[RMDB]
RNA sequence: GGGAACGACUCGAGUAGAGUCGAAAAAGUCCGUGUACGCACGGACAAUUCAGAGAUUGCCUCUUUCAUUACCUACAUUAAGUAUGCAAUGGGAAUGCAAUCGUUGAAGAUCCUGUACGCAGGAUCAAAAAGCGGCUCGGGUUCGCCCGAGCCGCAACAUACUAUCUUACUUCGGUAAGAUAGUAUGAAAAGAAACAACAACAACAAC
Reactivity to 2A3 in 0.01 (KOAc 150mM, MgCl2 10mM, bicine 150mM(pH8.5), 24C), signal-to-noise 2, nucleotides 027 to 156: a000g010u000c010c030g010u000g000u000a060c210g000c090a000c010g010g000a010c010a010a020u040u020c020a010g040a010g000a160u000u010g000c000c020u020c000u010u010u010c010a000u010u020a060c010c020u010a000c030a090u300u200a300a060g020u020a040u040g010c040a010a010u010g000g020g010a030a010u130g010c000a000a000u000c020g080u080u080g030a090a030g000a000u000c000c000u010g010u020a050c220g020c060a000g000g010a000u000c010a000a100a000a010a000g000c040g020g000c000u010c000g070g000g070u080u170c190g110c090c020c010g030a000g010c000c010g000c000a000a000
Chemical mapping of a 207-nucleotide RNA with 2A3. For 2A3 the reverse transcriptase was SuperScript II with manganese. The reactions ran in a buffer of 150 mM KOAc, 10 mM MgCl2 and 150 mM bicine (pH 8.5), at 24 C. Reactivities are given for positions 27 through 156.